[RMDB]
RNA sequence: GGGAACGACUCGAGUAGAGUCGAAAAAAAACGCAAGGCCGCUGACCGACGGGAUAUUGUGGGGCUUACCACAGGGGACGCGGCGUUAUCACUUGCCUUUUAAGCCGACCGUCUGGGCUGCAUACAAACCACCCAACUAUCUUCGGAUAGUUGGGAAGAUAUAGCGUAACUUCGGUUACGCUAUAUCAAAAGAAACAACAACAACAAC
Reactivity to 2A3 in 0.01 (KOAc 150mM, MgCl2 10mM, bicine 150mM(pH8.5), 24C), signal-to-noise 1, nucleotides 027 to 156: a000a000a000a000c120g000c010a000a010g140g000c020c010g040c090u110g110a010c030c040g070a030c080g060g020g020a090u100a090u160u060g000u040g000g000g060g090c110u070u110a020c010c000a020c010a010g000g010g030g040a010c030g000c020g000g030c000g000u020u020a040u060c020a020c110u000u000g020c010c040u000u190u040u060a030a020g010c000c000g050a070c000c020g000u010c040u060g090g000g000c010u000g010c030a050u110a150c070a030a080a030c020c010a030c030c010c000a000a000c000u010a000u000c000u040u010c080g040g000a000u000a010g000u000u000g000g000g000a000a000
Reactivity to DMS in 0.01 (KOAc 150mM, MgCl2 10mM, bicine 150mM(pH8.5), 24C), signal-to-noise 2, nucleotides 027 to 156: a000a010a000a040c040g000c030a030a080g000g000c020c010g050c010u000g020a200c010c000g010a110c040g010g010g030a160u000a100u000u000g000u000g030g010g000g030c110u000u010a100c020c040a020c020a030g000g000g090g000a290c130g000c000g000g020c100g000u010u000a090u010c120a240c040u000u000g010c030c040u000u000u020u000a030a120g040c040c010g000a090c020c020g030u000c010u010g030g010g030c040u000g030c030a100u000a070c070a090a120a080c030c040a140c000c000c000a010a000c020u000a010u000c000u000u030c300g070g000a000u000a000g000u000u040g000g000g010a000a000
Chemical mapping of a 207-nucleotide RNA with 2A3 and DMS. DMS (dimethyl sulfate) methylates the pairing face of unpaired adenines and cytosines. The RNA was probed in 150 mM KOAc, 10 mM MgCl2 and 150 mM bicine (pH 8.5) at 24 C. For 2A3 the reverse transcriptase was SuperScript II with manganese. The 2A3 profile rests on 1,044 reads. Values cover nucleotides 27 to 156. For DMS, 3,434 sequencing reads were counted.